[RMDB]
RNA sequence: GGGAACGACUCGAGUAGAGUCGAAAAAAACGCUGGGACUGUGCAAGUCGCAUGUUGUCAGCUGGGUACUGAAGCGCGCACGGUACGGCAGCUUGGAUUUACAUGCGUCACCACAGUCCUGUGCUGAAGCGCGCACGGCAACCGAAAGGUGCGAAAAUCGAAAACAUCCGUUCGCGGAUGUUUUCGAAAAAGAAACAACAACAACAAC
Reactivity to 2A3 in 0.01 (KOAc 150mM, MgCl2 10mM, bicine 150mM(pH8.5), 24C), signal-to-noise 1, nucleotides 027 to 156: a000a000a000c100g040c030u020g000g010g000a000c000u030g000u000g040c050a200a300g000u000c000g000c000a010u000g070u100u050g110u110c030a000g000c000u000g000g060g040u020a000c000u000g040a270a040g000c000g000c010g000c000a000c060g010g000u010a000c000g110g120c020a010g000c000u190u270g170g050a100u240u200u190a000c000a000u000g010c000g000u010c030a090c120c000a000c000a000g030u000c000c000u000g000u010g000c040u020g010a030a010g030c080g000c010g000c040a000c010g070g000c030a060a090c000c000g000a040a090a000g070g020u040g010c020g030a030a000a070a050